[RMDB]
RNA sequence: GGGAACGACUCGAGUAGAGUCGAAAACAUAAUCAACGAGAGUGUCAACCUGCCGCGAAGGUCUAUGAGUGGUCUGUUGCUUCUCUUUGUGGAGCUAAUGCACUGGUAUCUUUCGAGAUACCAGUGCGCCAUGCAGUACUUUCGAGUACUGCAUGGCAAAAGAAACAACAACAACAAC
Reactivity to 2A3 in 0.01 (KOAc 150mM, MgCl2 10mM, bicine 150mM(pH8.5), 24C), signal-to-noise 3, nucleotides 027 to 126: c010a040u220a140a150u100c010a000a040c020g010a000g000a000g080u080g110u120c010a010a010c000c020u030g010c000c010g000c000g010a050a040g080g100u110c120u290a200u140g030a050g030u020g000g020u030c060u010g020u040u000g010c000u050u030c010u030c000u010u020u060g040u010g060g040a050g050c050u170a150a120u300g000c010a000c000u000g000g000u000a000u000c010u020u130u050c190g080a020g000a010u010a020c000c000a000g000u000g000c000
Reactivity to DMS in 0.01 (KOAc 150mM, MgCl2 10mM, bicine 150mM(pH8.5), 24C), signal-to-noise 2, nucleotides 027 to 126: c050a150u000a110a110u000c050a060a020c050g010a060g010a040g010u000g000u010c030a040a020c040c070u000g010c040c020g020c020g030a230a050g000g010u010c220u000a060u020g000a300g020u000g010g010u000c070u010g020u000u010g010c010u010u000c000u000c030u000u000u000g030u010g010g010a030g030c110u010a060a070u010g010c010a030c000u000g000g000u000a000u000c000u000u000u000c190g020a000g010a010u000a000c000c000a010g000u000g010c000
This 177-nucleotide RNA was probed chemically with 2A3 and DMS. For 2A3 the reverse transcriptase was SuperScript II with manganese. DMS adducts were read by reverse transcription with MarathonRT. The DMS profile rests on 2,012 reads. The 2A3 profile rests on 2,904 reads.